[RMDB]
RNA sequence: GGGAACGACUCGAGUAGAGUCGAAAAGAUCUGACCAACCCCGAGCUUGACCAGCGAUCAGCCUCUUGCCCAUUAAUCAAGGUAAUAAUCUCAAGCGCAGAGGUAUCAAUAAACGGCCCCAGAUCGAAUGGUAUUAUGCAUUCGUGCAUAAUACCAUAAAAGAAACAACAACAACAAC
Reactivity to DMS in 0.01 (KOAc 150mM, MgCl2 10mM, bicine 150mM(pH8.5), 24C), signal-to-noise 4, nucleotides 027 to 126: g000a040u000c030u010g000a150c050c070a140a180c040c030c000c030g010a120g010c040u000u000g010a050c120c050a100g000c070g010a080u000c100a100g000c030c010u000c030u000u000g010c010c050c030a100u010u010a090a080u020c120a110a070g010g000u010a080a080u000a080a060u000c040u010c070a040a090g000c170g010c040a070g010a070g000g020u000a060u000c080a060a090u010a030a080a130c130g000g000c050c020c020c020a080g000a030u000c040g010a120
Reactivity to 2A3 in 0.01 (KOAc 150mM, MgCl2 10mM, bicine 150mM(pH8.5), 24C), signal-to-noise 3, nucleotides 027 to 126: g010a070u020c010u050g050a070c000c030a020a080c010c020c000c030g030a000g010c020u060u090g010a040c000c060a010g000c020g080a120u070c060a020g020c010c010u000c030u060u100g020c030c040c010a060u060u150a050a130u130c080a020a050g060g010u030a040a080u080a130a090u140c050u020c100a080a030g010c030g040c090a000g010a030g020g010u020a040u070c040a050a040u070a130a090a020c050g040g020c010c050c060c000a020g000a050u040c040g010a020
Chemical mapping of a 177-nucleotide RNA with DMS and 2A3.
2A3 adducts were read by reverse transcription with SuperScript II with manganese.
It was measured as part of the RMDB library OK2TST.
Values cover nucleotides 27 to 126.